[RMDB]
RNA sequence: GGGAACGACUCGAGUAGAGUCGAAAAGGGUCAAUAACGCCGAAUCGCAACCGAUGUAGCAACACACACAGCGGCACAACCGGUAUUGUGAGCGAACGAAAUCUCAAACGUUACGUACCCCAAGAGAAAUUAAAUAAAUAUUCGUAUUUAUUUAAUUAAAAGAAACAACAACAACAAC
Reactivity to 2A3 in 0.01 (KOAc 150mM, MgCl2 10mM, bicine 150mM(pH8.5), 24C), signal-to-noise 6, nucleotides 027 to 126: g020g000g020u040c040a040a150u090a140a040c060g030c050c030g050a030a090u050c030g000c030a000a030c010c020g020a020u070g020u070a090g030c050a070a120c020a030c020a010c010a000c010a170g080c060g050g010c030a010c010a090a050c050c020g030g030u080a110u080u090g030u030g040a030g030c030g030a030a020c030g080a090a100a130u090c090u030c080a080a110a040c010g010u030u040a010c010g010u030a040c000c000c000c010a080a040g040a000g030a160
Reactivity to DMS in 0.01 (KOAc 150mM, MgCl2 10mM, bicine 150mM(pH8.5), 24C), signal-to-noise 4, nucleotides 027 to 126: g000g030g000u000c070a090a050u010a100a080c050g010c120c020g010a100a070u000c050g000c050a160a110c040c030g000a090u020g010u020a120g010c050a080a100c110a050c150a070c140a090c100a060g010c170g000g000c060a050c100a060a080c080c030g000g040u010a060u040u010g010u020g000a080g000c070g010a060a070c080g010a050a080a050u020c070u020c060a070a050a130c040g000u010u000a020c080g010u010a050c040c000c000c100a100a170g010a120g000a090

Structure probing data (2A3 and DMS) for a 177-nucleotide construct. The reactions ran in a buffer of 150 mM KOAc, 10 mM MgCl2 and 150 mM bicine (pH 8.5), at 24 C. The data come from the RNA Mapping Database (RMDB), library OK1LIB.